[RMDB]
RNA sequence: GGGAACGACUCGAGUAGAGUCGAAAAUCAGGAUUAUGGUGCUGAAACUUAUAUAGCCUUCAUUCAUGGUGGCAGUAAAAUGUUUAUUGUGUUUGAAUGUGUUUAUGUAAGAGGAGCCGUACCUGUUAUUAAGUAGACUAUUCGUAGUCUACUUAAUAAAAGAAACAACAACAACAAC
Reactivity to 2A3 in 0.01 (KOAc 150mM, MgCl2 10mM, bicine 150mM(pH8.5), 24C), signal-to-noise 9, nucleotides 027 to 126: u080c010a010g010g010a030u160u090a010u100g050g020u070g050c110u090g070a130a060a020c000u010u000a010u000a000u010a020g000c000c000u000u000c000a000u000u000c000a000u010g020g000u000g020g000c000a000g020u040a010a040a040a060u030g050u020u160u250a020u020u010g010u000g000u000u000u010g030a040a020u060g130u010g020u150u300u040a010u000g010u000a000a000g020a040g040g050a020g000c000c000g000u010a010c000c000u000g010u010u000
Reactivity to DMS in 0.01 (KOAc 150mM, MgCl2 10mM, bicine 150mM(pH8.5), 24C), signal-to-noise 9, nucleotides 027 to 126: u020c010a010g010g010a130u020u010a010u010g010g030u010g010c090u020g010a120a150a090c000u000u000a010u000a010u000a010g000c000c000u000u000c000a000u000u000c000a020u000g000g030u000g000g000c000a000g010u000a080a080a130a120u000g000u000u000u030a000u010u000g020u000g010u000u000u000g000a020a010u010g010u030g020u010u020u000a000u010g010u000a000a010g010a080g010g010a100g000c000c010g020u000a020c000c000u000g000u000u000